The record gives the reactivity of an RNA of 177 nucleotides to 2A3 and DMS. 2A3 adducts were read by reverse transcription with SuperScript II with manganese. The RNA was probed in 150 mM KOAc, 10 mM MgCl2 and 150 mM bicine (pH 8.5) at 24 C. Source: RMDB library OK2TRN, as collected in RNAgym. For 2A3, 2,102 sequencing reads were counted.
[RMDB]
RNA sequence: GGGAACGACUCGAGUAGAGUCGAAAAGAAAGGCAGCGAGUGCAGCCCACGCAGCGGCAUGCUUUUGCAUGCCCAGUCGAGCCCACGACUCAGGGCAGCUGCGACACUGAGGGCAGCUGCCGAAAGACCAUCGUAUGGGUUUCGACCCAUACGAUGGAAAAGAAACAACAACAACAAC
Reactivity to 2A3 in 0.01 (KOAc 150mM, MgCl2 10mM, bicine 150mM(pH8.5), 24C), signal-to-noise 2, nucleotides 027 to 126: g040a010a090a000g020g010c010a000g030c040g060a080g170u250g120c060a020g030c030c050c010a040c010g040c010a030g000c010g030g000c000a020u010g020c000u130u250u190u300g000c000a000u000g000c000c000c000a000g000u020c010g010a010g000c000c000c000a040c020g090a060c010u030c090a020g020g050g010c000a020g010c000u020g000c010g020a010c050a020c120u200g120a170g000g050g000c010a010g010c020u030g000c000c000g020a000a000a000g030a030
Reactivity to DMS in 0.01 (KOAc 150mM, MgCl2 10mM, bicine 150mM(pH8.5), 24C), signal-to-noise 2, nucleotides 027 to 126: g000a140a130a240g000g000c020a030g000c010g000a160g030u040g020c100a090g030c010c030c020a200c120g000c060a070g040c090g010g080c000a000u000g000c020u000u030u010u010g040c000a050u000g000c000c000c040a040g000u000c040g010a170g000c010c000c000a300c030g000a030c020u010c130a120g000g020g020c060a050g000c000u000g000c010g000a100c150a060c230u000g010a110g030g000g010c010a180g030c010u000g000c010c000g010a030a070a080g000a260